[RMDB]
RNA sequence: GGGAACGACUCGAGUAGAGUCGAAAAAUGCCUCAUCUGUCGGGCCCGUUAGCCGGUGUCGGUGUGGGUGGUCAGGCCGGCGCCGCUGGCGGCGCCGGGUUGGGCUUCGGAGCGGUCGGGCACCCGAAGGGUUCCCGACUUUCGAGUCGGGAACCCUAAAAGAAACAACAACAACAAC
Reactivity to 2A3 in 0.01 (KOAc 150mM, MgCl2 10mM, bicine 150mM(pH8.5), 24C), signal-to-noise 1, nucleotides 027 to 126: a010u080g010c000c010u030c030a070u040c000u020g070u050c000g090g000g000c020c000c010g000u050u050a010g050c090c080g030g010u050g010u040c000g010g000u070g030u010g100g010g100u130g040g070u250c030a020g030g010c000c000g000g000c000g000c000c000g000c000u020g010g050c010g000g000c030g000c040c020g000g000g000u030u020g000g000g000c020u020u030c010g010g000a030g030c020g020g030u030c000g000g000g000c000a000c300c000c000g000a040

Chemical mapping of a 177-nucleotide RNA with 2A3. Conditions: 150 mM KOAc, 10 mM MgCl2 and 150 mM bicine (pH 8.5), 24 C.